[RMDB]
Notes: An RNA of 177 nucleotides, treated with 2A3 and DMS and read out base by base.
RNA sequence: GGGAACGACUCGAGUAGAGUCGAAAAAUGGAAUCUUGAAGAGUUGGCCGAAGCACGUCCAGGAUGGUCAGUGGAAAGUCUCUUGUCAGAAAUUCAGGAAACAGAGGAGAUUGAAGCAGAAUGGAGGCGAUACGAACCUGUUCGCAGGUUCGUAUCGAAAAGAAACAACAACAACAAC
Reactivity to 2A3 in 0.01 (KOAc 150mM, MgCl2 10mM, bicine 150mM(pH8.5), 24C), signal-to-noise 1, nucleotides 027 to 126: a030u060g000g030a040a040u080c010u090u090g020a030a050g040a040g060u120u100g020g030c040c020g040a010a010g030c030a040c040g030u000c050c020a010g000g070a070u070g060g040u070c070a020g010u070g060g030a190a000a020g010u000c010u040c000u090u040g050u050c020a020g020a120a080a030u180u100c020a010g180g000a090a020a000c030a050g070a020g040g010a030g020a030u000u080g000a040a040g000c070a010g040a070a050u070g030g000a030g060g000
Reactivity to DMS in 0.01 (KOAc 150mM, MgCl2 10mM, bicine 150mM(pH8.5), 24C), signal-to-noise 2, nucleotides 027 to 126: a080u000g010g000a090a090u020c070u000u000g020a120a070g010a070g000u020u000g020g010c050c030g000a100a090g020c070a070c070g010u000c050c030a070g030g020a080u000g000g010u020c040a090g010u000g010g000a070a060a110g020u000c010u000c020u000u000g000u010c090a060g010a040a080a100u020u010c090a060g000g010a090a050a110c060a060g010a070g010g000a060g010a090u020u000g010a070a060g010c000a040g010a100a050u010g000g000a090g040g010